Description: This 207-nucleotide RNA was probed chemically with 2A3. The reactions ran in a buffer of 150 mM KOAc, 10 mM MgCl2 and 150 mM bicine (pH 8.5), at 24 C. The data come from the RNA Mapping Database (RMDB), library M2RFPK.
RNA sequence: GGGAACGACUCGAGUAGAGUCGAAAAAGAGCCGGAUACGUCCGGCUCAACGGGGGAUACGUGUGGUGCCGUCCGCUCCCCCUAUGGCAUAACAAAUGCACCAUACACUAGGCUACGGCCUAGUGAAAAAAGGUGUAUGUGUUCGCACAUACACCAACCCUCAUACUAUGUUCGCAUAGUAUGAGGGAAAAGAAACAACAACAACAAC
Reactivity to 2A3 in 0.01 (KOAc 150mM, MgCl2 10mM, bicine 150mM(pH8.5), 24C), signal-to-noise 3, nucleotides 027 to 156: a000g020a000g000c000c000g010g000a010u040a040c160g090u020c000c000g000g000c000u000c000a000a000c000g000g000g000g010g000a020u030a100c010g020u060g000u000g050g010u010g020c000c000g020u040c050c040g140c050u030c000c010c000c000c020u030a150u190g140g010c090a120u100a200a100c070a070a100a030u120g000c010a000c010c000a010u020a030c000a000c000u000a000g000g010c000u020a020c210g100g000c000c000u000a000g000u000g010a050a000a000a000a000a010g000g010u000g000u010a000u000g000u000g000u020u040c090g050c060a000c000a000u000a020c020a010c000c000a010a030